The record gives the reactivity of an RNA of 207 nucleotides to 2A3. The reactions ran in a buffer of 150 mM KOAc, 10 mM MgCl2 and 150 mM bicine (pH 8.5), at 24 C. Values are in units of 0.01, from 0 to 300, in steps of 10. It was measured as part of the RMDB library ARCHII.
RNA sequence: GGGAACGACUCGAGUAGAGUCGAAAAGCUUCUGUGAGGUCUGAUUGUGGGAUGGCCUGAGGCUGGGGAUCACUGUGUAGUGGACCAGCCAUGUUGACGGAACGUCCGCACUAAGCUUGCCAUCAAUAUGGGUGCCGCGGAGGAGUCCACGGCAUUCGUCCCUACCCAAGUUCGCUUGGGUAGGGACAAAAGAAACAACAACAACAAC
Reactivity to 2A3 in 0.01 (KOAc 150mM, MgCl2 10mM, bicine 150mM(pH8.5), 24C), signal-to-noise 1, nucleotides 027 to 156: g000c020u010u000c010u110g140u070g110a010g000g020u030c030u030g050a220u030u200g030u130g030g070g000a080u090g040g000c000c020u060g030a140g050g000c000u000g000g000g080g020a090u060c000a000c000u000g160u040g230u300a020g030u000g010g000a000c000c030a010g000c010c000a010u050g090u000u010g000a020c000g040g140a180a180c140g000u020c000c030g000c030a020c030u030a030a000g090c000u060u000g070c030c000a060u090c090a000a090u090a100u180g060g000g000u010g000c000c010g000c020g000g030a000g100g000a150g070u070c000c000a000c000g000g000c040a000u050u000c010